[RMDB]
RNA sequence: GGGAACGACUCGAGUAGAGUCGAAAAGGGGUGCGCCGAGCGCUGAAAUCGCCGGUUGCUGUCACAUUCGGCGGGGCUGUCUCGUCCUUGAUGUUAUGAAUUCCAGCAUGGGUCGGCGGGAGGACACGACCAGCCGAUCUUUCGAGAUCGGCUGGUCAAAAGAAACAACAACAACAAC
Reactivity to DMS in 0.01 (KOAc 150mM, MgCl2 10mM, bicine 150mM(pH8.5), 24C), signal-to-noise 4, nucleotides 027 to 126: g010g010g020g010u000g010c080g020c030c050g010a120g010c030g020c050u010g010a040a110a080u000c060g000c030c020g000g010u000u000g040c030u010g010u000c170a130c050a070u000u000c210g020g010c050g020g000g010g020c130u010g000u000c050u000c050g020u010c010c070u010u010g000a060u010g000u000u010a130u000g010a050a120u000u000c120c020a070g000c050a080u010g000g010g010u000c070g000g000c060g010g000g010a100g010g000a100c210a090c210
Reactivity to 2A3 in 0.01 (KOAc 150mM, MgCl2 10mM, bicine 150mM(pH8.5), 24C), signal-to-noise 2, nucleotides 027 to 126: g000g000g000g050u040g020c020g000c060c050g050a060g080c060g000c090u140g070a100a050a070u110c010g000c010c000g000g010u070u140g000c050u030g070u090c040a020c010a060u090u080c030g010g000c000g040g010g010g000c050u120g090u150c020u020c060g070u100c010c040u070u120g050a140u070g020u130u170a110u190g130a130a080u250u000c040c000a000g000c020a100u090g020g070g080u120c050g010g040c040g000g020g000a070g040g010a000c020a010c150

Source: RMDB library OK2TRN, as collected in RNAgym.
This 177-nucleotide RNA was probed chemically with DMS and 2A3.
The 2A3 profile rests on 1,851 reads.
The RNA was probed in 150 mM KOAc, 10 mM MgCl2 and 150 mM bicine (pH 8.5) at 24 C.